The record gives the reactivity of an RNA of 177 nucleotides to DMS and 2A3. For 2A3 the reverse transcriptase was SuperScript II with manganese. DMS adducts were read by reverse transcription with MarathonRT.

RNA sequence: GGGAACGACUCGAGUAGAGUCGAAAAACGUGGCCAGCAUACGUGCUGGCCACGAGCUGGUUGGCAUUCUGGGCCUGGUUCAUGCCACCUCUGUUGUUAACUAUACCAGGAUGUCAGCAUAGUUGAAACUAGGGGUUUAAUUCGUUAAACCCCUAGUAAAAGAAACAACAACAACAAC
Reactivity to DMS in 0.01 (KOAc 150mM, MgCl2 10mM, bicine 150mM(pH8.5), 24C), signal-to-noise 3, nucleotides 027 to 126: a170c020g030u000g000g040c000c010a010g010c010a030u000a100c200g010u010g000c010u000g020g050c030c000a000c030g010a020g010c040u010g000g020u000u000g010g000c010a010u000u000c010u000g000g000g020c200c160u020g000g020u000u010c140a050u000g020c040c050a040c110c090u000c100u010g000u010u010g010u020u030a060a050c070u010a090u030a200c000c000a000g000g000a000u000g000u000c010a010g000c010a020u000a010g010u000u000g010a100a090
Reactivity to 2A3 in 0.01 (KOAc 150mM, MgCl2 10mM, bicine 150mM(pH8.5), 24C), signal-to-noise 3, nucleotides 027 to 126: a000c000g010u000g010g000c010c000a000g030c020a010u020a070c240g090u030g000c010u000g020g000c030c000a010c010g000a000g000c020u030g010g010u020u020g000g000c010a000u000u010c010u010g050g040g020c010c020u010g030g000u060u080c060a050u150g080c070c020a060c000c090u170c170u140g150u150u030g080u040u110a030a040c020u010a000u120a200c000c000a000g000g000a000u010g000u010c030a000g000c000a020u080a060g030u030u080g100a160a060